[RMDB]
RNA sequence: GGGAACGACUCGAGUAGAGUCGAAAACUUAUUUUAAGAAAACCACAGCAUCCAGUCAUAUUCACUGGAUCCUACUCCUUUCUGGUUUAUGAUCUAUUUCUCCUUAUUCACCAUCAGAUUUUGCAUACAAAUGGUCUAGAGCAGUGGUUUCCAACUGCUUAGUCUGGUGUUUCGACACCAGACUAAGAAAAGAAACAACAACAACAAC
Reactivity to DMS in 0.01 (KOAc 150mM, MgCl2 10mM, bicine 150mM(pH8.5), 24C), signal-to-noise 2, nucleotides 027 to 156: c040u000u000a070u010u000u000u000a100a150g010a080a090a060a130c010c030a110c030a110g010c050a120u010c010c000a020g000u010c060a070u000a140u020u000c060a060c010u000g000g020a040u000c050c020u000a100c030u000c020c020u000u010u010c070u000g030g030u000u010u020a050u020g000a070u000c050u000a130u010u000u000c000u000c000c030u000u000a070u000u000c010a020c060c020a030u000c010a050g030a230u010u000u010u000g050c100a100u000a090c080a040a100a040u010g000g000u000c030u000a100g010a070g030c020a050g020u000g040g010u020u000u000c010c020a060a050c050u010g030
Reactivity to 2A3 in 0.01 (KOAc 150mM, MgCl2 10mM, bicine 150mM(pH8.5), 24C), signal-to-noise 4, nucleotides 027 to 156: c020u070u080a070u230u170u040u140a120a080g020a030a060a010a010c010c000a030c030a050g030c010a010u000c010c000a000g070u090c080a130u060a220u300u210c070a010c020u000g000g000a000u020c000c000u030a060c040u050c010c000u050u150u060c070u070g010g090u010u060u060a120u160g090a090u000c040u050a120u080u120u040c030u110c020c020u130u110a090u130u150c040a030c090c000a040u080c020a020g040a130u040u080u150u240g020c020a040u030a160c020a040a130a090u090g020g000u000c020u060a030g010a000g040c020a010g000u020g030g000u040u060u000c020c020a060a070c040u060g000

Source: RMDB library OK3TST, as collected in RNAgym. This 207-nucleotide RNA was probed chemically with DMS and 2A3. Conditions: 150 mM KOAc, 10 mM MgCl2 and 150 mM bicine (pH 8.5), 24 C. Reactivities are given for positions 27 through 156. DMS adducts were read by reverse transcription with MarathonRT.